[RMDB]
RNA sequence: GGGAACGACUCGAGUAGAGUCGAAAAUAGACGUGGGGCGCUUGCCGCUUAAUCACGUACCGGGGCCGUCUCUUAUGACCCCCACAGAUAGUCAGCUACGUAACCUCACUUUUAGAACUCCAGUGGCCUCCAGUUGGGCUUUCGAGCCCAACUGGAGAAAAGAAACAACAACAACAAC
Reactivity to 2A3 in 0.01 (KOAc 150mM, MgCl2 10mM, bicine 150mM(pH8.5), 24C), signal-to-noise 1, nucleotides 027 to 126: u140a000g110a000c040g000u000g000g020g000g010c010g000c100u080u040g130c100c000g000c000u020u110a050a120u130c060a000c060g000u020a020c000c050g000g000g040g000c110c110g020u030c000u000c010u210u300a080u300g120a190c000c020c000c060c000a000c010a020g160a000u060a060g050u010c000a000g030c010u050a000c030g090u010a010a070c000c000u000c000a020c000u090u070u000u020a060g000a190a120c040u030c040c000a110g000u000g070g000c000
The record gives the reactivity of an RNA of 177 nucleotides to 2A3.
The reactions ran in a buffer of 150 mM KOAc, 10 mM MgCl2 and 150 mM bicine (pH 8.5), at 24 C.